[RMDB]
RNA sequence: GGGAACGACUCGAGUAGAGUCGAAAACUUUCAGCUUCGGCUGAAAGAAAAAAGGGGUCUAACAAAGCGGGAGGAACUACUUCUGAAGCCUCCACGGAAGCCAUCGAUCGCUUGUUAGACGGAGGCACCCAAAAAUCAGGAGAUUCGUCUCCUGAAAGAUGACACAGAGAUUCGUCUCUGUGUCAUCAAAAGAAACAACAACAACAAC
Reactivity to 2A3 in 0.01 (KOAc 150mM, MgCl2 10mM, bicine 150mM(pH8.5), 24C), signal-to-noise 2, nucleotides 027 to 156: c000u000u000u000c000a000g000c000u060u120c240g160g000c030u000g000a000a000a010g000a030a050a000a010a010a020g200g000g030g010u040c030u010a010a010c040a110a150a020g050c060g070g160g100a130g060g000a080a070c060u160a070c010u160u000c000u000g040a070a020g000c000c010u000c000c000a000c010g000g010a000a010g030c040c000a140u210c120g190a110u300c030g020c000u000u000g000u010u000a000g000a010c000g000g000a010g000g000c000a030c000c000c010a000a100a030a000a000u050c000a000g010g010a010g000a000u040u120c200g100u000c080u000c000c000u000g000a000a010a010